The record gives the reactivity of an RNA of 207 nucleotides to 2A3. The 2A3 profile rests on 504 reads. The reactions ran in a buffer of 150 mM KOAc, 10 mM MgCl2 and 150 mM bicine (pH 8.5), at 24 C.
[RMDB]
RNA sequence: GGGAACGACUCGAGUAGAGUCGAAAAUGUGGAAUUUUUAAAUUUCUAUCAAGGCAAUUUCCGAGAGCUCUUCUUUGUUCUCUGGAUAUCUCUGUCGUGCAUUCGAGUCUGAGGGCUGCUGGGCUUUUUUAGCGACGUCUGCAUGCAUGUGCGGGUACUACCAUAAUCGUUUCGACGAUUAUGGUAGAAAAGAAACAACAACAACAAC
Reactivity to 2A3 in 0.01 (KOAc 150mM, MgCl2 10mM, bicine 150mM(pH8.5), 24C), signal-to-noise 1, nucleotides 027 to 156: u080g000u060g040g070a020a000u080u030u030u140u300a300a240a070u070u070u000c030u030a080u090c040a040a040g020g000c020a040a070u030u180u060c000c010g000a020g020a000g020c010u000c010u280u080c030u150u200u060g020u080u000c040u000c110u180g030g000a040u000a020u040c080u000c010u020g050u020c000g000u000g010c000a030u000u130c040g020a050g040u030c010u000g030a050g060g030g000c070u050g040c040u050g030g020g030c040u010u060u090u000u060u080a040g000c030g060a040c040g050u030c020u020g030c010a000u030g000c020a020u170g000u060g080c030g040g020g000u050a030